[RMDB]
RNA sequence: GGGAACGACUCGAGUAGAGUCGAAAAUGAGAAUACUUUUAGUACAAGCGAGUACACGCAGUAUACUGCCACUUGUGUGAGAAUACUUUUAGUACAAGCGAGUACACGCAGUAUACUGCCACUUGUGGCUGUAAGGCAGUUUCGACUGCCUUACAGCAAAAGAAACAACAACAACAAC
Reactivity to DMS in 0.01 (KOAc 150mM, MgCl2 10mM, bicine 150mM(pH8.5), 24C), signal-to-noise 4, nucleotides 027 to 126: u010g010a120g020a160a100u000a030c050u010u030u010u010a090g030u040a060c190a110a130g000c070g020a050g010u040a070c120a140c300g000c050a010g010u000a010u000a010c030u000g000c010c220a030c030u000u000g040u010g010u020g000a100g000a130a200u000a030c050u020u030u030u050a130g000u000a050c020a060a140g020c000g000a070g000u010a070c120a150c300g000c020a000g000u050a010u010a000c000u010g000c000c110a000c000u010u020g020u010g030
Reactivity to 2A3 in 0.01 (KOAc 150mM, MgCl2 10mM, bicine 150mM(pH8.5), 24C), signal-to-noise 7, nucleotides 027 to 126: u220g040a040g080a120a050u140a160c060u080u070u100u150a090g060u080a060c040a090a010g030c020g050a010g040u130a060c060a010c080g000c010a000g000u000a000u000a000c000u000g010c010c010a000c020u020u010g010u010g030u040g110a090g130a110a040u050a060c000u040u180u150u260a080g020u010a020c020a040a020g010c020g020a020g030u080a050c020a000c050g000c000a000g000u000a000u000a010c000u000g000c010c000a010c000u010u010g010u030g100